[RMDB]
RNA sequence: GGGAACGACUCGAGUAGAGUCGAAAACCAUCGACUGUCACCAGAUGCUGCAUCACCUGAUCACUGAUGGCUCAACGGUAUCCGGCGGUACAACUGAAUACUUGGAGCUGCCUUUUGAGCGGGUUGGAAAAUCGGAGGUUGUUCGCAACCUCCGAAACGUAAGUUAGCCGUUCGCGGCUAACUUACGAAAAGAAACAACAACAACAAC
Reactivity to 2A3 in 0.01 (KOAc 150mM, MgCl2 10mM, bicine 150mM(pH8.5), 24C), signal-to-noise 1, nucleotides 027 to 156: c000c000a000u190c060g080a060c060u080g020u170c080a020c020c000a030g020a070u050g030c010u080g010c040a050u020c010a040c050c020u050g000a070u030c000a000c010u000g000a040u090g030g060c070u050c020a050a100c040g030g030u000a020u030c020c020g030g030c050g070g120u170a100c110a130a040c030u070g030a070a000u060a100c000u000u170g040g000a030g030c030u020g030c020c010u000u110u040u140g000a010g010c030g000g030g000u040u100g050g030a000a100a000a150u040c000g000g000a000g000g010u000u010g000u030u040c110g020c060a010a010c000c000u000c000c000g000a000a000a000
Source information:
This 207-nucleotide RNA was probed chemically with 2A3. The 2A3 profile rests on 717 reads. Values are in units of 0.01, from 0 to 300, in steps of 10. The reactions ran in a buffer of 150 mM KOAc, 10 mM MgCl2 and 150 mM bicine (pH 8.5), at 24 C.